[RMDB]
RNA sequence: GGGAACGACUCGAGUAGAGUCGAAAAGAUAUGGAAGUGUUUACGACAACAGCGCUUAUCGGAAACGAUAAGCGACAUGUCGAAUAAACAACAAGCUUCCUAAGUCAAAGCCAUGUUCGCAUGGCAAUCCAUAAAAUCCGUUCGCGGAUUUUAUGGAAAAAGAAACAACAACAACAAC
Reactivity to 2A3 in 0.01 (KOAc 150mM, MgCl2 10mM, bicine 150mM(pH8.5), 24C), signal-to-noise 1, nucleotides 027 to 126: g030a010u060a060u090g000g030a000a020g030u040g010u300u050u060a030c010g000a000c020a220a040c060a230g100c040g010c020u000u000a000u000c000g030g060a040a030a070c000g000a000u000a010a000g000c000g070a020c000a000u060g000u000c010g000a020a070u110a050a020a020c060a010a050c120a170a090g100c040u020u000c010c000u030a110a040g020u020c020a150a160a000g000c020c000a030u020g020u100u160c290g070c160a010u020g000g000c000a010a010
Reactivity to DMS in 0.01 (KOAc 150mM, MgCl2 10mM, bicine 150mM(pH8.5), 24C), signal-to-noise 2, nucleotides 027 to 126: g000a030u000a300u020g000g000a000a000g010u010g000u000u010u000a060c000g030a080c300a010a120c240a140g000c040g020c000u000u010a010u000c000g000g010a090a080a180c010g000a000u000a000a060g060c000g040a000c110a110u010g040u000c040g000a230a110u000a030a020a030c040a110a150c250a070a260g010c000u000u010c000c000u000a080a180g040u010c020a050a110a130g000c000c000a020u000g030u010u010c270g010c000a020u010g000g000c000a060a070
Chemical mapping of a 177-nucleotide RNA with 2A3 and DMS. For DMS, 1,156 sequencing reads were counted. The RNA was probed in 150 mM KOAc, 10 mM MgCl2 and 150 mM bicine (pH 8.5) at 24 C. DMS adducts were read by reverse transcription with MarathonRT.